[RMDB]
RNA sequence: GGGAACGACUCGAGUAGAGUCGAAAAUAGGCGAACGAGAGGCCCUCUCUUGUGCGGAGUUGUCACGCUGACACAAUUGUUAUGAUGUCCGAUUCCGGUAGCAUCGCGGCGAUGGUUUCAUAGGACAUCUUAUGAACCCAAGCGCUUCGGGGAAGCACAGUACCUAUAAUUUCGAUUAUAGGUACUGAAAAGAAACAACAACAACAAC
Reactivity to DMS in 0.01 (KOAc 150mM, MgCl2 10mM, bicine 150mM(pH8.5), 24C), signal-to-noise 4, nucleotides 027 to 156: u010a110g010g020c010g020a060a040c020g000a060g010a070g030g010c060c080c040u000c010u000c010u000u000g040u000g000c000g010g000a180g000u010u010g010u000c030a110c070g010c050u010g010a130c060a060c060a080a170u000u000g010u010u000a080u000g010a080u010g000u010c010c020g010a150u000u000c040c010g020g010u000a150g010c030a080u010c100g040c130g010g000c030g010a210u010g010g000u000u000u010c030a070u000a100g010g010a120c170a080u000c010u010u000a030u000g010a050a070c030c000c040a050a120g010c040g000c010u000u000c030g000g010g030g010a110a060g000c050a150
Reactivity to 2A3 in 0.01 (KOAc 150mM, MgCl2 10mM, bicine 150mM(pH8.5), 24C), signal-to-noise 4, nucleotides 027 to 156: u180a050g020g020c010g050a050a030c030g000a040g020a020g090g010c000c010c010u040c000u010c000u040u080g020u040g020c010g010g020a070g010u070u080g060u070c030a020c090g040c080u080g060a010c010a000c020a120a130u060u120g060u080u110a130u120g040a050u020g030u000c010c020g030a040u070u000c030c010g050g010u030a010g050c020a050u110c090g030c090g150g000c010g030a030u010g010g000u020u010u050c060a080u100a050g030g010a060c010a060u010c000u000u000a040u020g020a000a020c010c000c020a120a080g050c020g000c010u070u110c040g030g000g010g030a070a000g010c050a010

Source: RMDB library OK3TST, as collected in RNAgym. The record gives the reactivity of an RNA of 207 nucleotides to DMS and 2A3. The 2A3 profile rests on 2,877 reads. 2A3 adducts were read by reverse transcription with SuperScript II with manganese. The RNA was probed in 150 mM KOAc, 10 mM MgCl2 and 150 mM bicine (pH 8.5) at 24 C. High DMS reactivity at an A or C suggests that its Watson-Crick edge is free.